This 177-nucleotide RNA was probed chemically with DMS.
RNA sequence: GGGAACGACUCGAGUAGAGUCGAAAAGAUAUGGACACCUUGUGGAAACGAUGCGAAAUGACUAAGACAGUCUCUCGGAAACGAGAGAUCGAGUCAUUCGCAUCUCGCCACAAGGUGUCCUAAGUCACUACACUACGCUGUUCGCAGCGUAGUGUAGAAAAGAAACAACAACAACAAC
Reactivity to DMS in 0.01 (KOAc 150mM, MgCl2 10mM, bicine 150mM(pH8.5), 24C), signal-to-noise 1, nucleotides 027 to 126: g030a060u000a300u050g000g000a010c010a040c000c000u000u000g030u020g000g070a220a060a210c210g000a050u030g000c010g010a030a020a050u000g030a020c000u010a220a050g030a140c300a150g000u010c010u010c000u020c000g010g000a090a110a110c000g000a000g000a000g010a000u000c000g000a040g010u000c000a020u000u000c030g000c000a000u000c000u010c300g060c000c010a010c020a020a040g010g010u000g000u000c000c000u000a010a070g000u000c060a260
Source: RMDB library TTRINS, as collected in RNAgym. The RNA was probed in 150 mM KOAc, 10 mM MgCl2 and 150 mM bicine (pH 8.5) at 24 C.